[RMDB]
Conditions: 150 mM KOAc, 10 mM MgCl2 and 150 mM bicine (pH 8.5), 24 C. Chemical mapping of a 177-nucleotide RNA with DMS and 2A3. For DMS, 2,436 sequencing reads were counted. High 2A3 reactivity points to a flexible backbone, as in loops and unpaired stretches. The data come from the RNA Mapping Database (RMDB), library TTRDES. For DMS the reverse transcriptase was MarathonRT.
RNA sequence: GGGAACGACUCGAGUAGAGUCGAAAAGAUAUGGAUCGGAUGAUGGAGCUACACCUCGGAAACGAGGUGAAUAGCUAUGAAGUCGCACGAUCCUAAGUCAAAAGCAGCUUGUGUUCGCACAAGCUGCCCACCUACGCAAGUUCGCUUGCGUAGGUGGAAAAGAAACAACAACAACAAC
Reactivity to DMS in 0.01 (KOAc 150mM, MgCl2 10mM, bicine 150mM(pH8.5), 24C), signal-to-noise 2, nucleotides 027 to 126: g040a010u000a040u020g000g000a020u010c000g010g010a110u020g010a000u010g000g000a020g030c000u000a090c010a020c000c000u010c000g010g000a000a000a020c000g000a010g010g030u000g000a050a050u000a020g020c000u020a290u020g010a210a230g010u000c000g020c230a180c000g010a020u010c000c000u000a000a040g000u000c010a110a120a090a150g000c000a010g000c000u000u020g020u000g000u000u010c300g000c000a010c000a010a000g010c000u000g000c000
Reactivity to 2A3 in 0.01 (KOAc 150mM, MgCl2 10mM, bicine 150mM(pH8.5), 24C), signal-to-noise 1, nucleotides 027 to 126: g010a000u040a000u060g010g000a000u000c000g000g050a040u220g000a010u030g120g060a010g000c010u010a010c010a000c000c000u010c010g000g000a020a010a000c010g000a000g020g000u000g020a010a040u020a010g010c000u020a260u080g030a000a000g000u000c020g050c110a200c200g040a010u010c000c000u000a000a010g000u020c030a030a020a020a160g010c000a000g000c000u000u020g010u030g050u160u220c300g030c180a000c000a000a010g000c020u000g000c000